This 207-nucleotide RNA was probed chemically with 2A3. Conditions: 150 mM KOAc, 10 mM MgCl2 and 150 mM bicine (pH 8.5), 24 C. Values cover nucleotides 27 to 156. 2A3 adducts were read by reverse transcription with SuperScript II with manganese. The data come from the RNA Mapping Database (RMDB), library M2RFPK.
RNA sequence: GGGAACGACUCGAGUAGAGUCGAAAAAGCUGCUCAGUAUACGUACUGAGCAGCAAGGGGUUGAAGCGGACACCCCUUCAGGCGCGCGCCAAAGCUCCGUACGCCGCCUCAUACGUGAGGCGGCGAAAUAGGUGUAUCUGGUUCGCCAGAUACACAAGAAUAUCAGAGACUUCGGUCUCUGAUAUUCAAAAGAAACAACAACAACAAC
Reactivity to 2A3 in 0.01 (KOAc 150mM, MgCl2 10mM, bicine 150mM(pH8.5), 24C), signal-to-noise 1, nucleotides 027 to 156: a000g000c010u020g000c010u010c010a000g010u020a060u020a140c190g000u000a040c010u010g010a010g000c000a000g010c000a000a000g020g010g000g000u030u060g160a120a010g020c000g010g000a000c000a000c000c000c000c010u020u130c040a020g000g020c030g040c060g050c030g040c130c000a030a010a010g040c110u000c000c000g020u000a010c020g000c000c000g100c020c060u020c010a020u090a140c240g100u020g030a000g040g060c030g000g010c020g010a000a000a010u060a010g150g000u010g000u000a000u010c000u010g000g010u040u010c050g050c070c020a000g030a010u000a000c000a000c000a000a010